Structure probing data (2A3 and DMS) for a 177-nucleotide construct. The RNA was probed in 150 mM KOAc, 10 mM MgCl2 and 150 mM bicine (pH 8.5) at 24 C. For 2A3 the reverse transcriptase was SuperScript II with manganese.
[RMDB]
RNA sequence: GGGAACGACUCGAGUAGAGUCGAAAACGCAUCAUGCAAUAGCGCAACAAUAGCUGCAAUCGCCAUAUACAUUUCAAAGCGAACCGUUAUGUAAAUGAUGAUACCGAUAGAUGCAAUGAGUACGGAACCUACUCGUGCGAUUCGUCGCACGAGUAGGAAAAGAAACAACAACAACAAC
Reactivity to 2A3 in 0.01 (KOAc 150mM, MgCl2 10mM, bicine 150mM(pH8.5), 24C), signal-to-noise 1, nucleotides 027 to 126: c010g020c000a030u030c020a030u090g000c000a040a170u030a130g030c010g040c040a010a070c000a150a300u100a150g050c010u020g020c060a040a030u000c040g000c000c000a010u130a010u010a070c060a000u020u040u080c150a130a120a010g080c030g040a060a060c010c030g000u020u020a020u030g070u000a000a240a000u060g000a010u040g010a010u110a020c000c040g000a010u150a100g120a040u060g040c000a000a150u130g030a070g080u060a050c080g070g040a040a000
Reactivity to DMS in 0.01 (KOAc 150mM, MgCl2 10mM, bicine 150mM(pH8.5), 24C), signal-to-noise 1, nucleotides 027 to 126: c240g000c020a060u000c000a070u000g020c130a020a150u020a070g000c100g090c080a150a020c180a070a150u010a080g050c070u000g000c130a220a020u000c040g040c070c020a040u000a090u010a090c020a000u000u000u000c090a030a070a030g030c060g030a060a160c150c140g000u000u000a050u000g010u000a030a070a050u000g010a090u000g000a000u000a250c170c060g000a020u000a090g040a040u000g020c000a010a020u000g000a120g030u000a120c060g000g010a090a060